RNA sequence: GGGAACGACUCGAGUAGAGUCGAAAAACUAGGAGCGCACAUCUCUCUAAGACUGUACGUCAGUCUGUCUCUCUAGCACGCUUGUUCAACGAGAGAGAGAGAGCGUUGGAACAAGUGUGCAACGAAAUUAGUAGUUAGCUUUCGAGCUAACUACUAAAAAAGAAACAACAACAACAAC
Reactivity to DMS in 0.01 (KOAc 150mM, MgCl2 10mM, bicine 150mM(pH8.5), 24C), signal-to-noise 5, nucleotides 027 to 126: a090c100u000a080g010g010a070g010c070g030c070a080c090a110u000c010u000c020u010c040u010a090a060g000a020c020u000g010u010a080c190g010u010c030a020g010u000c010u000g000u000c040u000c030u000c040u000a230g010c000a010c010g010c020u000u000g000u000u010c010a030a030c030g010a080g000a160g000a080g000a080g010a070g010a030g010c030g010u000u000g020g000a010a020c020a010a020g020u000g010u000g010c010a030a030c210g000a050a060a090
Reactivity to 2A3 in 0.01 (KOAc 150mM, MgCl2 10mM, bicine 150mM(pH8.5), 24C), signal-to-noise 6, nucleotides 027 to 126: a000c060u070a050g040g030a030g020c030g040c030a030c020a180u040c020u010c000u000c010u040a040a030g010a020c010u030g060u160a040c130g190u050c070a010g000u000c010u030g030u020c070u010c000u000c040u060a020g000c000a000c000g010c000u000u010g000u010u020c000a020a010c010g010a020g010a010g000a000g000a010g000a000g010a180g010c010g010u000u030g130g010a020a000c000a000a000g010u010g000u010g000c000a020a020c050g040a030a050a080